[RMDB]
RNA sequence: GGGAACGACUCGAGUAGAGUCGAAAAUGUGGGGACUUCGGUCCCCACAAUAACGAGGAGCGGUUGGCCUCGUAAAAAGCCGCAAACUACGAAAGUUGAAAACACACGUCGAGUUCGCUCGACGUAACCCUUAGUCCAUAUUCGUAUGGACUAAGGGAAAAGAAACAACAACAACAAC
Reactivity to DMS in 0.01 (KOAc 150mM, MgCl2 10mM, bicine 150mM(pH8.5), 24C), signal-to-noise 3, nucleotides 027 to 126: u010g050u000g000g000g000g010a010c000u010u010c210g040g030u000c010c000c000c000a000c010a000a030u010a120a300c020g000a000g010g010a060g030c010g000g020u000u010g010g010c000c000u000c000g000u000a020a010a030a010a010g010c010c010g040c040a170a080a110c160u000a070c110g010a090a100a090g000u000u010g000a070a030a090a050c200a110c160a020c040g030u010c020g010a000g000u000u010c230g000c010u020c010g000a010c000g020u000a020a090
Reactivity to 2A3 in 0.01 (KOAc 150mM, MgCl2 10mM, bicine 150mM(pH8.5), 24C), signal-to-noise 2, nucleotides 027 to 126: u060g000u000g010g010g000g020a000c000u050u010c210g070g020u020c000c030c000c000a000c000a000a000u020a000a000c000g000a000g030g010a060g030c030g030g020u030u040g120g160c000c000u000c010g000u010a000a010a000a000a000g000c010c000g010c040a080a050a010c160u210a030c050g110a110a060a020g050u070u070g070a060a080a040a010c040a020c020a010c030g000u010c000g000a000g000u050u040c220g000c040u010c000g000a000c000g000u020a000a010

The data come from the RNA Mapping Database (RMDB), library M2PK50.
An RNA of 177 nucleotides, treated with DMS and 2A3 and read out base by base.
2A3 adducts were read by reverse transcription with SuperScript II with manganese.
The DMS profile rests on 2,717 reads.